RNA sequence: GGGAACGACUCGAGUAGAGUCGAAAAAUGCCUCGCUUGUUUGUGUCAUAUCGGAAGCCAGGGCCACCCUGACAGACGAAGUUAUUGAGCUGCACGAGCGUAUUCUGGGCAGUCUGUUCAGCAGGGCAUCCACACGCGGAUUCGUCCGCGUGUGGAUAAAAGAAACAACAACAACAAC
Reactivity to 2A3 in 0.01 (KOAc 150mM, MgCl2 10mM, bicine 150mM(pH8.5), 24C), signal-to-noise 2, nucleotides 027 to 126: a010u140g000c000c000u000c030g030c060u060u000g050u120u100u090g070u000g100u050c000a050u070a030u210c050g010g000a090a070g020c030c020a000g010g000g000c010c010a130c110c000c010u050g000a010c000a030g090a010c000g010a070a140g010u040u100a080u040u210g100a000g000c110u040g030c130a050c130g050a010g130c030g000u000a100u020u190c050u150g000g010g000c000a000g060u070c130u080g000u110u110c000a050g040c100a010g070g000g000c000
Reactivity to DMS in 0.01 (KOAc 150mM, MgCl2 10mM, bicine 150mM(pH8.5), 24C), signal-to-noise 1, nucleotides 027 to 126: a010u010g000c030c000u000c010g000c090u000u040g000u000u000u030g000u000g000u080c000a050u010a040u030c000g030g060a230a050g000c020c000a120g030g010g000c120c020a110c050c050c030u000g000a090c030a030g000a300c000g000a070a200g000u040u050a030u000u010g030a070g090c000u000g010c200a000c040g070a050g000c050g000u000a090u000u030c060u100g000g000g000c040a040g020u070c100u000g000u010u040c000a040g000c110a070g010g000g010c160